About this RNA:
Chemical mapping of a 177-nucleotide RNA with DMS and 2A3. The data come from the RNA Mapping Database (RMDB), library M2PK50. Values are in units of 0.01, from 0 to 300, in steps of 10. The 2A3 profile rests on 1,110 reads. The RNA was probed in 150 mM KOAc, 10 mM MgCl2 and 150 mM bicine (pH 8.5) at 24 C.
RNA sequence: GGGAACGACUCGAGUAGAGUCGAAAAACGACACAAUUCGUUGUGUCGUAAUGGAAAAGGCUAGGACCGGCCAGACAAAGGUCCGAAAAGAUCGAAAGUUCACACGCCACGAAUUCGUUCGUGGCAAUGAAUCAUUCCACUUCGGUGGAAUGAUUCAAAAAGAAACAACAACAACAAC
Reactivity to DMS in 0.01 (KOAc 150mM, MgCl2 10mM, bicine 150mM(pH8.5), 24C), signal-to-noise 1, nucleotides 027 to 126: a020c010g030a010c000a050c010a000a030u000u010c100g000u000u000g040u000g040u010c000g030u000a020a060u000g040g000a190a110a040a110g000g000c030u000a110g000g010a040c000c000g000g000c000c010a150g000a200c150a040a070a040g030g000u000c000c000g010a070a010a070a030g000a000u000c030g000a060a050a150g000u000u000c070a070c170a110c250g010c000c000a010c010g020a000a020u030u000c240g020u000u000c000g020u000g000g000c000a000a000
Reactivity to 2A3 in 0.01 (KOAc 150mM, MgCl2 10mM, bicine 150mM(pH8.5), 24C), signal-to-noise 1, nucleotides 027 to 126: a000c010g010a000c010a000c010a000a020u100u120c170g010u050u030g000u030g000u030c000g000u020a030a010u070g000g030a050a050a120a280g010g000c020u070a050g020g020a000c020c000g020g000c000c000a040g050a060c100a040a140a010g060g000u000c000c000g000a020a030a000a030g110a030u070c090g090a110a040a060g040u090u060c040a020c000a000c140g020c010c030a010c000g010a020a000u080u090c180g050u030u000c000g000u020g000g000c000a000a000